[RMDB]
The data come from the RNA Mapping Database (RMDB), library VIROID.
An RNA of 207 nucleotides, treated with 2A3 and read out base by base.
RNA sequence: GGGAACGACUCGAGUAGAGUCGAAAAUGCCGCUUCCCUCCACCCUCGCCGGUCUUCUGCGCUGGCGCUCUGGCUACUACCCGGUGGAUACAACUGACGCUUGUACUCCGCCCUGCCUUUUUCUACUUCUUCGCUGGAGCGGCGAGGGUGGGCUUCUGUGUAAAUACGGGUUCGCCCGUAUUUACACAAAAGAAACAACAACAACAAC
Reactivity to 2A3 in 0.01 (KOAc 150mM, MgCl2 10mM, bicine 150mM(pH8.5), 24C), signal-to-noise 1, nucleotides 027 to 156: u190g020c040c030g010c100u040u040c000c000c000u000c010c000a020c020c000c030u000c000g030c010c000g130g180u060c020u030u030c030u060g000c030g010c020u010g010g000c040g030c060u070c040u050g040g000c000u120a170c040u080a140c110c070c030g000g010u000g010g000a010u010a000c010a010a020c030u240g250a080c170g120c170u010u020g000u020a020c210u020c010c020g040c000c020c000u050g000c000c000u060u140u060u130u040c080u100a190c030u030u060c000u020u040c030g000c010u060g000g020a020g010c000g010g000c000g000a010g010g000g010u000g000g000g000c000u040u000c010u000

The 2A3 profile rests on 828 reads. The reactions ran in a buffer of 150 mM KOAc, 10 mM MgCl2 and 150 mM bicine (pH 8.5), at 24 C.